[RMDB]
RNA sequence: GGGAACGACUCGAGUAGAGUCGAAAAGGAGAAAUGUGAGCACCUGUAUGAAGAGAAGAUGGGUACAAAGGAAUGAGUGGGGGUUCCUCUUCACCAUCCCUAAAACUGUGGCAGUAUUUAGCAGCAUCAUUGAUGAGGCUGGUCUCAGAACUGUGCAUCAUGGGCACGUAUUCGUACGUGCCCAUGAAAAAGAAACAACAACAACAAC
Reactivity to 2A3 in 0.01 (KOAc 150mM, MgCl2 10mM, bicine 150mM(pH8.5), 24C), signal-to-noise 2, nucleotides 027 to 156: g070g000a010g020a030a080a040u090g030u070g050a030g010c020a050c080c020u020g050u050a130u070g030a050a060g040a010g000a080a010g000a030u090g000g020g030u080a050c100a040a110a010g020g050a030a040u030g040a040g080u140g000g000g020g000g030u070u110c020c050u000c000u000u020c000a010c020c000a020u090c000c000c000u020a060a070a000a000c040u050g000u070g060g010c020a000g010u040a070u050u060u040a030g010c030a000g000c000a010u050c010a030u080u220g040a070u070g010a130g020g050c000u020g040g070u010c030u020c020a060g010a110a050c020u030g020u040g000c000a020
Reactivity to DMS in 0.01 (KOAc 150mM, MgCl2 10mM, bicine 150mM(pH8.5), 24C), signal-to-noise 2, nucleotides 027 to 156: g030g040a120g000a070a040a130u010g010u000g000a180g000c010a090c030c050u000g000u000a100u010g040a220a070g030a100g010a040a100g230a090u010g020g050g050u000a190c130a090a040a110g050g030a030a070u030g010a080g030u010g000g010g020g000g000u010u010c110c050u210c020u000u020c040a030c040c010a050u000c010c000c010u020a040a070a050a110c030u000g010u010g010g020c000a070g000u000a160u000u020u000a090g040c110a040g010c040a010u000c030a130u010u000g020a110u010g000a000g020g060c020u000g000g020u010c100u000c110a070g010a080a090c010u000g000u000g000c010a210